The record gives the reactivity of an RNA of 207 nucleotides to DMS and 2A3. Conditions: 150 mM KOAc, 10 mM MgCl2 and 150 mM bicine (pH 8.5), 24 C. For DMS, 1,435 sequencing reads were counted. For DMS the reverse transcriptase was MarathonRT.
[RMDB]
RNA sequence: GGGAACGACUCGAGUAGAGUCGAAAAGCAGGAGAGUGGCUGGAGCAGAGAGGCACCUGGGCAGGUCUUGUCAGAGUAAGGACUGUGACCUUUACUCAAAGGGAGAUGGGAUCCCACUGGAGAACUUUCAGCAGAGAAAGUGAUCUGACUUAUGUUAGUACGACGGUAUAUUCGUAUACCGUCGUACAAAAGAAACAACAACAACAAC
Reactivity to DMS in 0.01 (KOAc 150mM, MgCl2 10mM, bicine 150mM(pH8.5), 24C), signal-to-noise 1, nucleotides 027 to 156: g030c050a060g000g010a080g000a090g030u010g030g020c040u020g000g000a090g000c090a070g040a190g040a070g070g060c010a100c120c050u000g030g020g050c080a090g030g010u000c010u080u000g010u030c020a140g040a120g000u060a030a050g000g020a070c000u000g030u010g010a110c080c000u020u000u000a050c030u000c000a130a160a100g000g010g020a180g030a030u000g030g000g000a170u000c010c010c000a130c190u000g000g000a080g020a200a050c010u010u000u000c020a090g040c180a160g000a140g010a100a100a010g010u000g000a150u010c020u000g000a090c050u000u030a040u030g010u010u000a250
Reactivity to 2A3 in 0.01 (KOAc 150mM, MgCl2 10mM, bicine 150mM(pH8.5), 24C), signal-to-noise 2, nucleotides 027 to 156: g020c020a040g000g110a040g020a020g080u070g010g020c040u020g030g000a030g040c060a050g080a000g010a030g050g030c020a040c000c030u010g020g000g080c040a040g020g020u010c020u110u140g040u050c010a030g010a010g030u050a050a000g050g020a060c140u070g050u070g260a110c010c000u000u020u050a020c030u010c060a080a080a020g000g000g000a050g000a050u080g060g000g020a030u020c010c000c000a040c070u050g010g000a010g010a040a000c000u050u050u020c040a090g040c030a000g060a000g000a160a000a000g000u020g010a020u040c010u020g060a040c010u110u150a020u300g050u050u030a020